[RMDB]
RNA sequence: GGGAACGACUCGAGUAGAGUCGAAAAGAAAGAAAGAAAAAGUCGACGACUCGAAAGAGUCGCAUGGAAACAUGCCUACGAAUGCGUCCAAAGUAGGUCGACGAAAAGGACGCAGAAAUAAAGAAAAGGGAUAGUGUAUCUUCGGAUACACUAUCCCAAAAGAAACAACAACAACAAC
Reactivity to 2A3 in 0.01 (KOAc 150mM, MgCl2 10mM, bicine 150mM(pH8.5), 24C), signal-to-noise 1, nucleotides 027 to 126: g200a010a040a000g200a120a070a140g270a070a000a050a000a050g020u020c000g010a040c000g000a000c000u000c000g010a030a100a110g000a000g000u000c020g000c000a030u000g000g010a000a000a000c010a000u010g000c020c020u020a020c060g020a150a060u190g000c010g000u000c040c000a070a030a000g090u000a000g000g000u000c000g020a010c000g000a000a000a000a000g000g020a000c000g000c000a000g000a000a000a000u140a000a120a040g170a010a060a020a040